[RMDB]
RNA sequence: GGGAACGACUCGAGUAGAGUCGAAAAAAAAAGAUAUGGAAGUAUCCAAGCUUGGAUUUAUGUACCGAGGAUACUCGGAAACGAGUAUUACAGUACAUUGUCAGCUUGGUACUUCCUAAGUCAAAAACAUACAUAGUAGGUUCGCCUACUAUGUAUGAAAAGAAACAACAACAACAAC
Reactivity to DMS in 0.01 (KOAc 150mM, MgCl2 10mM, bicine 150mM(pH8.5), 24C), signal-to-noise 6, nucleotides 027 to 126: a040a060a080a110a070g010a030u000a300u000g000g010a030a010g010u000a000u020c010c000a010a010g000c000u010u010g030g000a030u010u010u000a000u000g020u000a000c000c000g010a300g000g000a010u010a010c000u000c000g010g000a070a090a130c000g000a010g000u000a000u000u000a000c000a020g010u000a000c000a000u000u000g000u000c000a010g010c000u000u000g000g020u000a000c000u000u000c000c000u000a010a050g010u010c030a060a090a090a120a130
Reactivity to 2A3 in 0.01 (KOAc 150mM, MgCl2 10mM, bicine 150mM(pH8.5), 24C), signal-to-noise 4, nucleotides 027 to 126: a000a010a010a030a050g070a060u110a060u130g000g000a000a010g010u010a030u290c020c000a000a010g010c020u220u290g240g010a070u300u300u130a020u060g000u000a010c000c010g070a130g100g000a010u000a000c000u000c010g000g020a050a090a030c010g000a000g000u000a010u010u010a000c000a000g000u000a000c010a010u000u010g000u000c000a000g000c000u000u000g000g010u000a000c000u000u000c000c000u010a020a010g020u000c020a020a020a020a050a160
Annotation
This 177-nucleotide RNA was probed chemically with DMS and 2A3. The reactions ran in a buffer of 150 mM KOAc, 10 mM MgCl2 and 150 mM bicine (pH 8.5), at 24 C. DMS adducts were read by reverse transcription with MarathonRT. For 2A3 the reverse transcriptase was SuperScript II with manganese. The DMS profile rests on 10,934 reads.